This 177-nucleotide RNA was probed chemically with DMS and 2A3. It was measured as part of the RMDB library TTRDES. The reactions ran in a buffer of 150 mM KOAc, 10 mM MgCl2 and 150 mM bicine (pH 8.5), at 24 C. DMS adducts were read by reverse transcription with MarathonRT.
RNA sequence: GGGAACGACUCGAGUAGAGUCGAAAAGAUAUGGACCUACCAGAGCUUUUGACGCUCCACAGUCGGAAACGACUGUGUGAGCGAUAAGCUCGGUAGGUCCUAAGUCAAACGCCUGGUUCGCCAGGCGGUAUCGAGAAUUCUUCGGAAUUCUCGAUACAAAAGAAACAACAACAACAAC
Reactivity to DMS in 0.01 (KOAc 150mM, MgCl2 10mM, bicine 150mM(pH8.5), 24C), signal-to-noise 4, nucleotides 027 to 126: g010a060u000a300u000g000g000a020c000c000u000a010c010c010a200g010a010g010c000u000u000u010u020g010a270c070g000c000u000c010c010a000c010a000g020u010c000g040g000a130a090a150c010g000a030c000u010g010u000g000u010g020a000g010c000g020a020u010a020a020g010c000u000c010g010g000u000a000g010g000u000c000c000u010a010a070g010u000c050a120a130a300c030g010c000c010u000g000g010u000u010c280g010c000c000a000g000g020c010g020
Reactivity to 2A3 in 0.01 (KOAc 150mM, MgCl2 10mM, bicine 150mM(pH8.5), 24C), signal-to-noise 3, nucleotides 027 to 126: g010a010u060a030u110g000g010a000c020c000u000a010c040c060a220g000a000g030c020u250u220u300u300g240a160c040g000c000u040c030c010a000c000a010g040u000c000g020g030a060a080a050c000g000a010c020u020g020u010g010u010g000a010g020c000g000a010u030a020a010g020c010u000c010g000g010u000a000g000g010u000c010c000u000a000a010g000u010c000a030a030a030c020g010c000c000u000g030g080u080u090c300g020c060c010a010g020g000c020g010